[RMDB]
RNA sequence: GGGAACGACUCGAGUAGAGUCGAAAAUGUGACGGGGAGCGAAAUAAUAGUAGCGAAGUUCCUGACGUCACACUGCCAAGAAAAGCUUCUAGUGAGAAAACAACUGCCCGUACCGUAAACCGACACAGGUAGUCGAGGAGAGUAUCCUAAGGUGAGCGUGAUUGGUGUAGUUCGCUACACCAAUCACAAAAGAAACAACAACAACAAC
Reactivity to 2A3 in 0.01 (KOAc 150mM, MgCl2 10mM, bicine 150mM(pH8.5), 24C), signal-to-noise 2, nucleotides 027 to 156: u090g000u000g010a010c010g000g010g000g060a000g030c030g080a100a060a000u280a050a110u160a100g230u070a020g150c130g100a090a000g010u010u000c000c020u100g120a050c030g000u000c000a000c000a000c000u050g020c000c000a000a060g100a040a110a000a010g030c010u050u000c030u070a080g040u070g200a040g030a030a040a040a040c040a020a040c070u040g020c030c010c010g040u000a040c060c000g010u100a050a100a120c070c000g040a030c020a010c010a160g030g000u030a010g050u020c060g020a030g050g080a010g030a000g030u090a030u020c020c000u050a060a040g010g030u060g030a010g040c150